[RMDB]
RNA sequence: GGGAACGACUCGAGUAGAGUCGAAAAAAUCAAGAGCGAUACUCAUCUAUAUUUAAGUUGCAUCCUGCAUUUAAUAUAGCUGAAGCUUAUGCGCAAUUGGUGCCAUAUUAUCAACUCAUAGGCAAACAGCGUAUUACCACUAUACAGGGUCCUCCUGCAAAGCGUGCAAUUUCGAUUGCACGCUUUGAAAAGAAACAACAACAACAAC
Reactivity to 2A3 in 0.01 (KOAc 150mM, MgCl2 10mM, bicine 150mM(pH8.5), 24C), signal-to-noise 5, nucleotides 027 to 156: a000a010u200c110a090a010g040a020g030c010g060a060u060a110c030u020c030a020u000c020u020a020u000a070u050u130u070a140a110g110u100u040g060c030a080u230c070c120u150g000c010a000u050u000u020a010a010u010a010u010a010g000c010u010g000a070a000g010c010u080u030a010u080g050c030g000c060a050a140u100u100g040g000u030g010c000c010a040u080a090u200u140a100u160c080a050a120c060u030c130a080u090a130g010g000c020a030a060a090c020a040g020c000g000u020a040u030u080a030c000c030a040c040u110a070u070a130c020a000g030g000g030u070c010c030u050c000c000u000g020
Reactivity to DMS in 0.01 (KOAc 150mM, MgCl2 10mM, bicine 150mM(pH8.5), 24C), signal-to-noise 2, nucleotides 027 to 156: a110a100u000c050a030a110g020a170g020c030g050a100u010a290c050u000c020a060u000c040u010a090u000a050u000u000u000a070a100g020u010u020g030c010a120u000c170c030u010g050c020a040u000u000u010a000a040u000a010u000a040g050c060u000g010a130a270g040c030u000u000a000u000g020c100g000c020a050a170u000u000g010g040u010g030c100c060a120u010a110u000u000a090u000c040a060a060c030u030c040a070u010a060g020g030c040a060a060a230c050a060g000c040g030u000a120u000u000a040c050c060a090c110u000a120u000a040c020a100g000g010g030u010c080c020u020c000c020u000g000

Source: RMDB library OK3TST, as collected in RNAgym.
The record gives the reactivity of an RNA of 207 nucleotides to 2A3 and DMS.
For DMS, 3,406 sequencing reads were counted.
Conditions: 150 mM KOAc, 10 mM MgCl2 and 150 mM bicine (pH 8.5), 24 C.
DMS adducts were read by reverse transcription with MarathonRT.